[RMDB]
RNA sequence: GGGAACGACUCGAGUAGAGUCGAAAACUGCUCUGAGAGUUGAUGAUAAAGCAAUUGAAUAUCUGAUUUCUCAAUUUAGAGCGAGAAAGAGCAUCUCGAUCAAGGGAGGUAAAGUGAUUCAAACCCCCGCCUAAACCAAAUUCGUUUGGUUUAGGCGAAAAGAAACAACAACAACAAC
Reactivity to 2A3 in 0.01 (KOAc 150mM, MgCl2 10mM, bicine 150mM(pH8.5), 24C), signal-to-noise 1, nucleotides 027 to 126: c030u050g090c000u000c010u080g130a140g030a060g140u090u250g000a090u040g030a000u110a030a150a030g030c050a200a300u250u300g050a180a030u030a010u080c010u000g020a050u000u150u030c030u000c000a000a090u010u130u190a030g000a030g020c000g030a030g020a050a090a000g130a030g020c010a040u010c040u010c050g040a100u050c010a070a130g040g000g020a000g060g000u010a010a100a050g060u030g090a110u040u130c030a000a000a300c000c010c010c000
Reactivity to DMS in 0.01 (KOAc 150mM, MgCl2 10mM, bicine 150mM(pH8.5), 24C), signal-to-noise 2, nucleotides 027 to 126: c060u000g010c020u000c000u000g000a130g000a050g010u010u010g000a070u000g020a060u000a060a120a100g030c110a140a130u020u010g010a140a110u010a040u010c000u020g000a180u010u000u000c000u000c010a200a100u010u020u030a110g000a020g000c010g000a020g010a020a060a070g010a050g000c140a070u000c020u000c010g030a050u000c090a070a080g000g010g010a030g000g010u000a030a060a100g000u030g000a130u000u000c070a010a100a270c020c020c000c110